RNA sequence: GGGAACGACUCGAGUAGAGUCGAAAAUUUAUAAUCCAACACCUAUUGCGGAAUUAAAGAAGCGACAUAUCCCAGUAGCUUCGUAUAUGCCUACAAGGGAAAAUAGAGUUGCAGUAAAACGCAAAAGCGCGUUUAUCGUAUUCGUACGAUAAACGCGAAAAGAAACAACAACAACAAC
Reactivity to DMS in 0.01 (KOAc 150mM, MgCl2 10mM, bicine 150mM(pH8.5), 24C), signal-to-noise 1, nucleotides 027 to 126: u020u040u020a070u020a040a200u020c000c010a190a160c200a040c040c050u000a080u010u000g000c300g000g010a080a000u030u000a030a120a080g030a050a180g000c000g010a040c060a000u040a150u000c000c070c080a080g010u000a100g000c000u000u000c090g000u040a050u020a050u030g000c140c000u000a080c080a090a000g000g000g010a020a040a050a080u000a000g000a170g000u000u000g000c020a040g050u060a050a020a080a030c000g000c040a040a020a190a000g000
Reactivity to 2A3 in 0.01 (KOAc 150mM, MgCl2 10mM, bicine 150mM(pH8.5), 24C), signal-to-noise 2, nucleotides 027 to 126: u010u140u010a300u120a110a090u090c040c000a230a000c020a070c030c000u090a110u070u050g000c000g030g160a110a110u140u180a220a030a190g270a280a000g000c000g000a000c040a040u130a010u000c000c000c000a020g000u000a000g070c030u090u070c050g010u050a190u020a040u150g000c090c000u000a130c000a300a260g000g000g000a000a280a000a000u120a000g230a000g000u010u060g020c000a030g070u110a190a000a000a000c000g000c000a000a000a160a000g070